[RMDB]
RNA sequence: GGGAACGACUCGAGUAGAGUCGAAAAUAGCUUCUGUCCUAGGUCAGUAGUCUAGGCGUGUUGUGGUCGUAAACCACAUCCAAGGGGAUGUCAUCGCUUAGCGUUUAAGAUGUGAAUGUAGACGUGAGAGUCUCGUUUGAUUCGUCAAACGAGACUCAAAAGAAACAACAACAACAAC
Reactivity to 2A3 in 0.01 (KOAc 150mM, MgCl2 10mM, bicine 150mM(pH8.5), 24C), signal-to-noise 2, nucleotides 027 to 126: u120a000g030c030u060u030c020u050g060u030c000c010u010a030g000g040u030c040a050g140u150a020g060u140c000u010a000g000g010c000g000u030g020u010u050g020u010g000g000u000c000g040u060a000a050a000c020c000a000c000a000u020c030c000a130a140g110g000g000g000a020u070g060u050c070a060u070c020g010c090u070u060a020g050c030g050u080u080u040a080a070g050a080u070g060u050g210a060a030u120g020u100a010g000a030c040g040u060g060a180
Reactivity to DMS in 0.01 (KOAc 150mM, MgCl2 10mM, bicine 150mM(pH8.5), 24C), signal-to-noise 1, nucleotides 027 to 126: u010a100g010c060u000u000c020u000g020u000c000c000u000a050g000g000u000c040a050g020u010a070g000u000c010u000a010g000g000c060g010u000g010u000u000g000u000g010g020u000c030g020u000a070a070a040c030c000a000c000a040u010c000c080a120a090g000g000g000g010a130u010g010u010c030a060u000c060g010c070u000u010a110g010c040g010u000u000u000a090a110g000a080u010g010u010g010a070a070u010g000u000a070g020a050c000g010u000g000a140